[RMDB]
RNA sequence: GGGAACGACUCGAGUAGAGUCGAAAAUCGAUAUGGACAUGCUCCCCGUGCGCCUGAUACAUCUGAGCUUCACUGAGCGGUCAGUAGAGUGGAAAUGGCUAAAAAUAAGGCCACCGGAGGCAGCCGGCCAUUAAGAAAUCUGCAGGAGCUCACAUGACACUACCCUUUUAUUCGUAAAAGGGUAGUGAAAAGAAACAACAACAACAAC
Reactivity to 2A3 in 0.01 (KOAc 150mM, MgCl2 10mM, bicine 150mM(pH8.5), 24C), signal-to-noise 2, nucleotides 027 to 156: u090c040g010a060u060a090u180g070g020a020c010a040u110g020c020u050c000c000c000c000g020u050g000c100g010c010c040u050g040a070u040a150c000a050u010c040u040g020a010g030c000u030u020c020a050c100u040g010a020g050c020g040g090u020c000a010g030u050a030g020a030g040u050g040g000a150a140a080u070g000g020c010u060a090a120a020a100a130u070a060a110g050g020c020c000a000c010c030g000g000a010g020g010c020a000g050c010c020g020g000c010c000a000u050u020a060a030g030a040a080a050u070c020u020g030c020a050g000g030a020g000c020u040c040a050c030a030u090g010a020
Reactivity to DMS in 0.01 (KOAc 150mM, MgCl2 10mM, bicine 150mM(pH8.5), 24C), signal-to-noise 2, nucleotides 027 to 156: u000c020g020a210u010a120u000g020g010a080c060a080u000g010c060u010c010c030c010c070g030u010g000c020g070c020c030u010g010a140u010a090c040a090u000c030u020g010a230g000c030u010u000c010a040c050u010g020a060g030c120g000g000u000c020a070g040u010a050g020a070g030u030g050g010a150a090a030u000g020g050c030u040a020a110a060a130a280u010a080a130g020g000c000c020a100c040c060g030g000a060g010g040c080a100g000c060c070g000g000c040c020a070u010u010a100a130g000a080a100a050u000c070u000g010c000a230g020g010a120g020c020u000c010a020c020a130u010g010a300